[RMDB]
Conditions: 150 mM KOAc, 10 mM MgCl2 and 150 mM bicine (pH 8.5), 24 C.
This 177-nucleotide RNA was probed chemically with 2A3 and DMS.
For 2A3, 635 sequencing reads were counted.
The DMS profile rests on 1,333 reads.
Values cover nucleotides 27 to 126.
2A3 adducts were read by reverse transcription with SuperScript II with manganese.
RNA sequence: GGGAACGACUCGAGUAGAGUCGAAAAUACACCGUUUCGAUUGGAAUUUCAUCACGAGUAAUCGUGACAUCAAAUGGUUUAUCUUCGUUGGAACGUUGAAUUGUCAGAGUUACUUUGGUGCCAAAAAGCUACUCCUAGUGUUCGCACUAGGAGUAGCAAAAGAAACAACAACAACAAC
Reactivity to 2A3 in 0.01 (KOAc 150mM, MgCl2 10mM, bicine 150mM(pH8.5), 24C), signal-to-noise 1, nucleotides 027 to 126: u190a000c040a050c000c020g030u000u000u050c090g070a130u000u080g020g090a030a080u050u160u270c030a020u000c010a010c200g000a010g040u020a020a080u080c140g110u090g000a010c000a000u040c010a010a090a170u160g130g050u010u050u060a160u050c050u150u190c090g290u190u230g090g010a050a030c000g050u000u080g080a160a170u090u040g020u000c000a020g020a060g120u010u050a000c000u030u060u060g030g000u000g110c020c000a010a060a000a000a000
Reactivity to DMS in 0.01 (KOAc 150mM, MgCl2 10mM, bicine 150mM(pH8.5), 24C), signal-to-noise 2, nucleotides 027 to 126: u000a080c100a150c050c030g010u000u020u020c060g010a100u020u010g020g000a190a070u000u000u010c170a120u000c000a020c120g000a000g010u000a100a040u000c040g010u020g000a020c020a020u010c070a140a020a060u010g040g020u000u010u000a080u000c070u010u000c240g020u010u000g010g010a010a040c040g010u000u000g000a030a040u000u010g010u000c020a110g000a080g000u000u000a030c020u010u000u030g000g040u000g000c030c040a030a070a060a080a060